[RMDB]
RNA sequence: GGGAACGACUCGAGUAGAGUCGAAAAGGUAGAUUUCGAUCUACCAGGCAACCUUUGUGAUAACGAGCAUGUUGUCAGCUCGGUACCCCAUUGGGGGACGAGCUUGGAUUUACAUGCGAGUUAUCACUCUGGUCGAGAUGAGUUUUUCGAAACUCAAGAUCCGAACUGAAUUCGUUCAGUUCGGAUCAAAAGAAACAACAACAACAAC
Reactivity to 2A3 in 0.01 (KOAc 150mM, MgCl2 10mM, bicine 150mM(pH8.5), 24C), signal-to-noise 5, nucleotides 027 to 156: g010g010u020a020g010a020u190u160u110c270g090a040u000c010u000a000c000c000a010g080g030c030a010a050c000c000u010u000u010g000u000g000a010u000a000a010c000g010a000g020c000a000u000g000u010u030g000u010c000a000g030c000u010c010g010g060u300a140c050c000c000c040a260u300u300g080g000g010g000g000a030c000g000a010g020c010u030u080g080g010a030u230u140u210a000c000a000u000g000c000g000a000g000u000u000a000u000c000a000c000u000c010u000g030g000u020c050g160a040g040a270u130g000a020g020u010u020u000u090u160c220g110a070a010a000c010u000c010a020a050
Reactivity to DMS in 0.01 (KOAc 150mM, MgCl2 10mM, bicine 150mM(pH8.5), 24C), signal-to-noise 1, nucleotides 027 to 156: g020g040u000a030g010a050u000u000u010c160g020a040u000c010u000a020c000c000a080g030g000c040a010a030c030c010u000u000u010g010u000g000a040u000a000a010c000g000a300g000c020a000u000g020u000u000g000u000c030a110g000c000u000c000g090g020u000a170c020c000c000c010a300u000u000g020g010g000g000g020a090c020g000a040g000c040u000u000g000g000a040u000u000u000a030c020a030u000g020c000g010a220g000u000u000a010u000c000a030c000u000c020u000g000g000u000c000g000a160g010a140u000g010a010g020u000u000u020u000u040c220g000a030a030a050c000u020c020a000a130